[RMDB]
RNA sequence: GGGAACGACUCGAGUAGAGUCGAAAAGCAAAGAAAUUUUAUCCGAAUAAGGCGAAGUAAGCAAGUCGACCCAACGCGAGGGCGCUAGCGAGCUUACGAGCCCUAGCAGAAUAAUCGCGAGAAAAAACAAAAAGGAGGUGUUCGCACCUCCUUUUUGAAAAGAAACAACAACAACAAC
Reactivity to DMS in 0.01 (KOAc 150mM, MgCl2 10mM, bicine 150mM(pH8.5), 24C), signal-to-noise 2, nucleotides 027 to 126: g000c120a090a100a040g010a090a080a080u000u010u040u000a120u010c020c020g000a100a080u010a070a050g000g020c050g000a150a040g020u000a050a060g000c010a070a110g020u000c020g010a210c000c020c000a050a100c110g010c080g000a100g000g000g020c090g050c130u000a030g010c130g040a150g020c000u000u010a040c050g020a240g000c000c000c050u020a020g020c110a090g020a090a060u000a050a080u020c040g010c050g010a100g010a000a020a060a090a060a160
The data come from the RNA Mapping Database (RMDB), library M2PK90. Chemical mapping of a 177-nucleotide RNA with DMS. The RNA was probed in 150 mM KOAc, 10 mM MgCl2 and 150 mM bicine (pH 8.5) at 24 C.